[RMDB]
Chemical mapping of a 177-nucleotide RNA with DMS and 2A3.
For DMS the reverse transcriptase was MarathonRT.
Source: RMDB library OK1LIB, as collected in RNAgym.

RNA sequence: GGGAACGACUCGAGUAGAGUCGAAAAGAGGGAAGACACGGAUGAAUGGGCUAUUGACAUAUCUCACUCUCAUUGGGGACUUCUGACCGUCAGCCGAGAUCAUGUCAUCUUUUGGCGAGACCAAAUAGAGAAUACGUCCAUUCGUGGACGUAUUCUCAAAAGAAACAACAACAACAAC
Reactivity to DMS in 0.01 (KOAc 150mM, MgCl2 10mM, bicine 150mM(pH8.5), 24C), signal-to-noise 2, nucleotides 027 to 126: g010a150g010g000g000a080a020g000a100c110a030c050g020g000a060u020g000a030a090u010g000g000g000c100u000a070u020u030g010a060c110a040u010a050u000c000u000c050a060c080u000c010u020c060a150u040u020g020g010g030g010a160c130u010u000c100u020g000a150c020c080g010u010c050a110g030c100c060g000a030g000a010u000c150a100u000g010u010c080a030u020c030u030u000u000u030g000g020c060g030a120g010a180c020c070a040a020a080u030a150
Reactivity to 2A3 in 0.01 (KOAc 150mM, MgCl2 10mM, bicine 150mM(pH8.5), 24C), signal-to-noise 5, nucleotides 027 to 126: g080a000g000g030g020a040a000g030a020c020a030c090g030g050a040u050g040a050a130u090g030g020g000c050u070a050u100u130g030a020c030a060u080a020u020c010u010c000a020c040u050c000u020c060a090u070u120g000g030g010g060a060c030u080u010c040u130g100a110c010c040g030u050c010a050g010c020c060g020a010g010a030u040c030a070u140g090u110c040a040u010c030u020u100u050u080g020g000c050g040a070g030a070c020c000a050a030a010u160a060

Conditions: 150 mM KOAc, 10 mM MgCl2 and 150 mM bicine (pH 8.5), 24 C. 2A3 is a SHAPE reagent: it acylates the 2'-hydroxyl of flexible nucleotides of all four kinds.